[RMDB]
RNA sequence: GGGAACGACUCGAGUAGAGUCGAAAAUUUUACAUAUUGCGCAAUGCGCAGGGGCAAUUCAGUCUGUGGCCGCAACAAUGCGUCUUACCGGCAGGCUGGGACAUUGUGUGUCAGCCGCAGUCACAGGGUACGACGUGAAUUUCGAUUCACGUCGUACAAAAGAAACAACAACAACAAC
Reactivity to 2A3 in 0.01 (KOAc 150mM, MgCl2 10mM, bicine 150mM(pH8.5), 24C), signal-to-noise 1, nucleotides 027 to 126: u050u020u010u080a080c060a030u210a150u110u040g030c020g000c100a150a300u300g000c030g000c000a020g010g030g010g000c000a060a080u040u030c050a120g120u000c040u000g000u000g030g000c010c030g030c020a050a040c000a070a080u080g000c020g000u040c020u020u040a080c010c030g060g000c020a000g000g000c040u000g000g060g000a000c000a020u110u110g060u030g030u010g110u230c030a000g000c000c030g000c010a010g030u030c010a000c010a060g150g000
Reactivity to DMS in 0.01 (KOAc 150mM, MgCl2 10mM, bicine 150mM(pH8.5), 24C), signal-to-noise 2, nucleotides 027 to 126: u000u000u010u000a110c100a120u020a160u000u000g000c020g030c000a170a100u010g010c020g060c000a050g010g000g000g000c300a050a100u000u020c080a140g000u010c000u020g010u000g000g020c050c070g000c050a040a060c120a020a070u000g020c060g030u000c030u000u000a070c050c050g000g020c160a100g000g020c050u010g010g000g000a060c010a130u000u000g000u000g030u010g000u000c020a040g000c030c000g030c030a040g000u000c070a060c070a090g000g000

An RNA of 177 nucleotides, treated with 2A3 and DMS and read out base by base.
For 2A3, 1,238 sequencing reads were counted.
For 2A3 the reverse transcriptase was SuperScript II with manganese.
The reactions ran in a buffer of 150 mM KOAc, 10 mM MgCl2 and 150 mM bicine (pH 8.5), at 24 C.